[RMDB]
RNA sequence: GGGAACGACUCGAGUAGAGUCGAAAACGGUAACAAAACUAAAUUAAAGGCUGAACUUAUGGACCAAAGUGGCAACAGGACAUUGGUCAAAGCUAAUGCCACGUUUUCUAGCGAACAAGGGAAUCCAAAUCACCAUUAGGUUCGCCUAAUGGUGAUUAAAAGAAACAACAACAACAAC
Reactivity to DMS in 0.01 (KOAc 150mM, MgCl2 10mM, bicine 150mM(pH8.5), 24C), signal-to-noise 5, nucleotides 027 to 126: c050g020g010u010a080a100c140a080a060a080a100c120u010a060a080a090u000u010a070a080a110g020g000c020u010g010a090a090c040u010u000a070u020g000g010a030c010c030a030a050a070g030u000g000g020c080a060a090c170a090g020g000a040c030a090u000u000g000g000u010c040a060a020a040g010c020u010a070a120u000g010c010c020a060c080g000u000u000u000u000c040u000a100g020c040g000a050a060c080a090a090g000g010g000a100a080u010c050c060a070
Reactivity to 2A3 in 0.01 (KOAc 150mM, MgCl2 10mM, bicine 150mM(pH8.5), 24C), signal-to-noise 4, nucleotides 027 to 126: c020g030g070u120a110a000c060a110a090a020a040c050u180a130a050a230u270u170a190a090a030g020g000c010u000g030a020a010c000u060u040a050u220g100g010a000c000c010a040a040a050g040u020g080g060c060a160a040c040a170g090g100a020c020a060u050u060g050g020u040c010a040a000a000g000c030u060a090a020u060g000c000c000a020c030g000u040u010u010u020c030u040a050g030c010g060a030a030c030a080a060g080g040g020a010a060u010c020c020a040
The record gives the reactivity of an RNA of 177 nucleotides to DMS and 2A3. For DMS, 4,164 sequencing reads were counted. Values are in units of 0.01, from 0 to 300, in steps of 10. It was measured as part of the RMDB library OK2TRN. The RNA was probed in 150 mM KOAc, 10 mM MgCl2 and 150 mM bicine (pH 8.5) at 24 C.